This 207-nucleotide RNA was probed chemically with 2A3 and DMS. Reactivities are rounded to 0.1 and cut off at 0 and 3. Values cover nucleotides 27 to 156. DMS adducts were read by reverse transcription with MarathonRT. For 2A3 the reverse transcriptase was SuperScript II with manganese. High DMS reactivity at an A or C suggests that its Watson-Crick edge is free. Source: RMDB library RSTRND, as collected in RNAgym.

[RMDB]
RNA sequence: GGGAACGACUCGAGUAGAGUCGAAAAUGGAUGGACUCGUUAAAGAAGUCUAUGCAACCUUUAGAUGCAGACGAUUAUUCGUAUGCAAUGGCUGCCUAAUUAGCAAAAGUUAAUUAACCAGCCAUCGCUCUUCAGCGGAGGCGCUUACUCCAAGGCUACUAUUCUCCAAGUUCGCUUGGAGAAUAGUAAAAGAAACAACAACAACAAC
Reactivity to 2A3 in 0.01 (KOAc 150mM, MgCl2 10mM, bicine 150mM(pH8.5), 24C), signal-to-noise 7, nucleotides 027 to 156: u060g030g020a000u010g000g000a000c000u000c040g070u150u220a140a080a070g100a100a020g010u000c010u010a020u020g080c020a050a120c010c000u100u160u210a130g020a110u110g010c010a010g010a040c010g010a040u080u050a080u300u230c010g010u020a020u050g000c000a020a020u010g000g010c000u000g000c010c010u030a020a000u000u000a000g000c030a100a170a290a080g010u010u000a010a000u010u000a010a030c040c000a000g000c000c010a010u020c020g010c020u060c040u210u140c070a040g040c030g040g010a010g020g020c060g020c100u090u110a060c010u010c040c020a040a010g110g000c000u010
Reactivity to DMS in 0.01 (KOAc 150mM, MgCl2 10mM, bicine 150mM(pH8.5), 24C), signal-to-noise 1, nucleotides 027 to 156: u000g010g000a070u000g010g000a060c040u000c040g040u000u010a110a140a190g000a070a030g010u000c000u010a040u000g000c060a060a170c040c020u010u000u010a070g020a210u000g010c020a030g000a010c020g000a090u000u000a170u000u000c010g020u000a070u000g000c010a010a020u000g000g020c000u010g000c140c020u000a010a020u000u010a050g000c000a040a110a040a230g010u000u020a010a020u000u000a050a060c080c000a050g020c000c000a010u000c010g000c010u000c070u020u000c120a120g010c020g030g010a030g000g000c120g030c080u000u000a070c000u000c000c010a060a090g000g030c060u000